RNA sequence: GGGAACGACUCGAGUAGAGUCGAAAAAGGAGUAAGUCUGCUUAGAUGGCAUGUCGCUUUGGGCAAAGCGUAAAAAGCCCAAAUAAAAUUAAACGCAAACAACGUUAAAUUCGCUCCUGCUUACGCUAAAGCUGCGUAAGUUCAGUUGAGCCUGAAACUAACGGUGUAAGUUCGCUUACACCGUUAGAAAAGAAACAACAACAACAAC
Reactivity to 2A3 in 0.01 (KOAc 150mM, MgCl2 10mM, bicine 150mM(pH8.5), 24C), signal-to-noise 5, nucleotides 027 to 156: a020g080g020a030g050u090a100a020g020u050c030u040g010c000u040u110a060g030a120u160g010g000c040a030u080g060u130c000g000c010u040u020u030g010g020g000c100a210a210a010g000c020g060u100a030a040a010a010a000g000c000c000c000a010a010a000u020a000a000a000a010u070u110a030a030a010c040g010c110a090a130a050c030a060a020c030g020u040u080a070a100a130u170u140c070g000c010u000c000c000u000g020c000u000u000a000c010g000c010u090a220a060a080g100c160u060g000c030g000u000a000a010g000u050u080c030a000g000u070u080g010a010g010c000c020u050g030a080a020a020
Reactivity to DMS in 0.01 (KOAc 150mM, MgCl2 10mM, bicine 150mM(pH8.5), 24C), signal-to-noise 2, nucleotides 027 to 156: a080g010g010a080g020u000a030a080g010u000c010u000g010c030u000u000a120g010a110u000g010g030c040a130u000g010u000c030g010c050u000u000u000g010g010g070c020a040a040a080g040c090g000u030a050a030a040a120a170g020c010c000c010a040a030a100u010a040a060a060a060u000u010a060a070a050c010g000c050a060a100a090c070a080a050c000g010u000u000a080a020a160u000u000c020g000c010u000c000c000u010g010c010u000u000a010c010g010c000u000a080a080a200g040c180u000g000c010g010u000a010a020g010u000u000c010a070g020u000u010g010a060g000c020c040u000g010a070a100a160